[RMDB]
RNA sequence: GGGAACGACUCGAGUAGAGUCGAAAAGGCAACAAAUGCGCCGAAGUCAACGAUACGGGUCACUUUACCAGUGUAGACGCGGCCCACUUCGAUUUCUGCAGUGAUCUCUUCGAUACGACGAAUAGCACACUCGCUACGAGUUCGCUCGUAGCGAGUGAAAAGAAACAACAACAACAAC
Reactivity to 2A3 in 0.01 (KOAc 150mM, MgCl2 10mM, bicine 150mM(pH8.5), 24C), signal-to-noise 1, nucleotides 027 to 126: g080g000c020a010a000c000a030a230a100u090g000c050g000c030c010g000a040a000g030u030c030a060a080c060g000a000u040a060c030g000g040g000u000c000a010c010u110u120u060a030c010c020a140g030u100g000u300a010g000a000c080g030c030g060g000c000c000c000a000c060u030u040c020g090a120u030u040u050c010u010g040c060a010g010u020g060a100u050c010u000c000u130u000c010g040a040u070a120c120g010a000c010g040a120a020u050a060g020c040a000
Reactivity to DMS in 0.01 (KOAc 150mM, MgCl2 10mM, bicine 150mM(pH8.5), 24C), signal-to-noise 1, nucleotides 027 to 126: g010g020c030a100a230c190a070a050a170u010g000c100g010c020c030g000a080a140g010u010c050a070a140c050g000a140u010a040c170g010g020g010u000c030a050c070u030u010u000a050c060c230a070g030u010g020u000a050g000a040c090g010c120g020g000c000c010c000a090c090u000u010c130g010a090u030u010u000c030u000g020c000a090g030u000g000a050u000c050u000c050u010u010c000g000a110u000a070c070g030a000c050g000a120a030u010a070g000c110a090

Annotation:
Chemical mapping of a 177-nucleotide RNA with 2A3 and DMS. Source: RMDB library OK2TST, as collected in RNAgym. 2A3 adducts were read by reverse transcription with SuperScript II with manganese. DMS adducts were read by reverse transcription with MarathonRT. For DMS, 738 sequencing reads were counted.